[RMDB]
RNA sequence: GGGAACGACUCGAGUAGAGUCGAAAAAUUGAGAGACAUUCUAAUAACCAGCCUAUACUCUUCAAAAAUGCUAAGUUCAUAGAAAGUAAGAGCAAAGAACUAUUCCAGAUUAAAGGAGACUAAAGAAGCAUUACAACUAAAUGCAUCAAGAAAUGGAGACGUAUAUCAGUUUCGACUGAUAUACGUCAAAAGAAACAACAACAACAAC
Reactivity to 2A3 in 0.01 (KOAc 150mM, MgCl2 10mM, bicine 150mM(pH8.5), 24C), signal-to-noise 3, nucleotides 027 to 156: a000u090u120g020a080g000a000g010a020c020a030u040u050c010u050a120a060u050a070a050c020c030a010g070c010c000u050a050u040a050c020u020c010u060u130c080a050a090a020a050a030u060g020c030u070a060a030g030u040u030c010a060u110a170g140a070a080a010g080u130a090a050g030a020g070c040a060a060a040g000a010a010c000u020a050u100u000c000c020a010g020a070u060u050a060a030a000g040g000a040g020a010c040u110a060a030a080g060a080a000g010c010a000u000u000a040c050a120a000c050u060a060a020a000u030g010c010a060u050c080a070a070g070a090a120a040u060g030g040a070
Reactivity to DMS in 0.01 (KOAc 150mM, MgCl2 10mM, bicine 150mM(pH8.5), 24C), signal-to-noise 2, nucleotides 027 to 156: a160u010u000g010a170g000a150g000a080c010a020u040u000c000u000a120a110u000a060a070c040c020a240g020c030c000u010a110u000a070c000u000c010u060u000c100a040a080a070a060a070u010g000c030u000a030a120g000u030u000c030a140u000a170g010a130a070a090g010u000a060a050g020a090g030c020a030a090a110g010a030a070c050u000a170u000u010c010c000a170g020a100u000u000a020a050a040g030g030a090g050a050c080u000a010a040a110g010a060a160g000c030a010u000u000a030c020a070a130c100u040a040a060a060u010g010c050a120u000c030a030a040g010a040a060a070u020g000g000a300
Description:
Source: RMDB library OK3TST, as collected in RNAgym. An RNA of 207 nucleotides, treated with 2A3 and DMS and read out base by base. The RNA was probed in 150 mM KOAc, 10 mM MgCl2 and 150 mM bicine (pH 8.5) at 24 C. For 2A3 the reverse transcriptase was SuperScript II with manganese. For DMS, 2,511 sequencing reads were counted.